Chemical mapping of a 177-nucleotide RNA with 2A3 and DMS. Conditions: 150 mM KOAc, 10 mM MgCl2 and 150 mM bicine (pH 8.5), 24 C. For DMS, 2,671 sequencing reads were counted.
RNA sequence: GGGAACGACUCGAGUAGAGUCGAAAAACAAAGAGAUCGAAAGAGCAAUGUGUAACUCAUCAUCCUAGCGAAUGGUUGGGCUCGAAAGAUCGAGUGUUACCAUGACAUCCCGGACGCUAGAAAAAAAACAAAGAUAAGUGUUCGCACUUAUCUUUGUAAAAGAAACAACAACAACAAC
Reactivity to 2A3 in 0.01 (KOAc 150mM, MgCl2 10mM, bicine 150mM(pH8.5), 24C), signal-to-noise 3, nucleotides 027 to 126: a000c050a010a080a010g120a020g010a070u130c080g030a060a080a060g020a000g000c050a070a110u090g030u000g040u060a060a050c020u000c040a050u020c020a050u040c040c010u000a000g010c020g070a090a010u020g020g000u000u040g010g060g000c020u010c010g090a130a160a050g250a150u060c010g000a010g010u090g220u160u030a010c000c010a020u030g050a010c010a110u050c010c000c000g040g000a010c000g000c010u000a020g000a070a010a010a000a000a000a000
Reactivity to DMS in 0.01 (KOAc 150mM, MgCl2 10mM, bicine 150mM(pH8.5), 24C), signal-to-noise 3, nucleotides 027 to 126: a070c140a080a070a100g000a120g010a040u000c030g000a060a080a070g010a040g030c050a070a070u010g000u010g010u010a060a060c060u020c060a090u000c070a050u000c080c010u000a030g000c010g000a190a010u010g000g000u000u020g000g000g000c010u000c000g020a020a130a100g010a070u000c000g000a020g020u000g000u010u000a030c010c000a000u010g020a100c220a100u000c020c000c010g000g010a200c020g000c000u020a020g010a000a000a000a050a060a080a080